Structure probing data (DMS and 2A3) for a 177-nucleotide construct. The reactions ran in a buffer of 150 mM KOAc, 10 mM MgCl2 and 150 mM bicine (pH 8.5), at 24 C. The data come from the RNA Mapping Database (RMDB), library VIROID.
RNA sequence: GGGAACGACUCGAGUAGAGUCGAAAAAACUGGCAAAAAAGGACGGUGGGGAGUGCCCAGCGGCCGACAGGAGUAAUUCCCGCCGAAACAGGGUUUUCACCCUUCCUUUCUUCGGGUGUCCUUCCUCGAUACUAUGUUUGUUCGCAAACAUAGUAUCAAAAGAAACAACAACAACAAC
Reactivity to DMS in 0.01 (KOAc 150mM, MgCl2 10mM, bicine 150mM(pH8.5), 24C), signal-to-noise 3, nucleotides 027 to 126: a040a030c060u020g000g030c080a010a020a040a070a070a050g000g000a090c050g020g010u000g010g020g000g000a090g020u010g000c020c010c000a060g010c040g010g010c020c020g010a060c070a060g000g010a060g000u000a040a090u000u010c010c000c010g020c030c030g010a030a020a040c180a030g000g000g010u010u000u010u000c160a070c010c000c000u000u000c020c010u000u000u000c030u010u000c030g020g020g000u000g010u000c020c040u000u000c010c020u000c280
Reactivity to 2A3 in 0.01 (KOAc 150mM, MgCl2 10mM, bicine 150mM(pH8.5), 24C), signal-to-noise 2, nucleotides 027 to 126: a000a000c060u070g050g000c060a170a070a000a030a070a110g020g010a010c000g040g030u040g010g010g020g000a160g100u080g020c010c000c000a030g050c030g040g050c030c060g020a020c020a040g010g040a060g030u030a040a030u050u010c010c010c000g000c000c000g030a030a040a030c150a040g060g000g000u070u120u190u250c130a090c000c000c140u010u020c010c000u050u050u020c000u040u030c020g040g070g020u050g000u000c030c000u020u050c020c010u000c040